[RMDB]
An RNA of 207 nucleotides, treated with 2A3 and read out base by base.
RNA sequence: GGGAACGACUCGAGUAGAGUCGAAAAACUGCGGCAGCCCGCCGGGGUGGUCGCCGCGUUCGCGCCGUGGAACGCCCCGCUGAUCCUCGGCACGCGCUCGUUCGCCGUCGCGCUGGCCAUGGGCAACACGGUGGUGCUCAAGCCGAGCGAGCAGGCCCCCUCUUAACUGUUUCGACAGUUAAGAGGGAAAAGAAACAACAACAACAAC
Reactivity to 2A3 in 0.01 (KOAc 150mM, MgCl2 10mM, bicine 150mM(pH8.5), 24C), signal-to-noise 2, nucleotides 027 to 156: a010c080u130g000c010g040g000c000a050g040c030c040c030g020c120c010g020g010g010g020u070g010g070u140c070g000c030c020g010c020g020u040u060c040g050c000g040c030c000g030u030g010g010a050a070c030g060c010c020c030c090g020c100u070g040a090u000c000c010u000c000g000g030c060a060c060g020c010g000c010u030c020g080u140u120c060g010c040c010g060u050c030g000c000g040c050u080g080g000c010c010a130u130g030g020g000c020a050a050c040a020c060g080g020u070g000g090u090g020c020u040c050a070a030g000c020c020g030a010g010c010g000a020g050c040a060g050g020c000c020

2A3 is a SHAPE reagent: it acylates the 2'-hydroxyl of flexible nucleotides of all four kinds.
The reactions ran in a buffer of 150 mM KOAc, 10 mM MgCl2 and 150 mM bicine (pH 8.5), at 24 C.